Chemical mapping of a 177-nucleotide RNA with DMS. It was measured as part of the RMDB library M2PK90. For DMS the reverse transcriptase was MarathonRT.
[RMDB]
RNA sequence: GGGAACGACUCGAGUAGAGUCGAAAAGAAAACAUGGAAACAUGCAGGUGGCGACCCGCCCGGGCCACCGUUACUCCACUCCACUCCUUCGGGACUGGUUUGGAGGAACAUAACAGGGCAAAAAAAAGUCAAUAAACUACUUCGGUAGUUUAUUGACAAAAGAAACAACAACAACAAC
Reactivity to DMS in 0.01 (KOAc 150mM, MgCl2 10mM, bicine 150mM(pH8.5), 24C), signal-to-noise 1, nucleotides 027 to 126: g000a060a100a010a190c020a020u000g010g000a210a060a200c010a010u000g000c050a180g000g000u000g020g000c000g010a030c010c040c160g000c000c000c000g020g010g020c000c010a000c010c000g010u000u000a040c000u010c000c010a010c010u000c000c000a000c120u000c000c000u040u010c190g040g020g020a040c070u010g010g010u000u010u000g000g010a020g000g010a020a010c070a100u010a040a100c180a060g010g000g040c060a010a000a000a050a020a030a080a090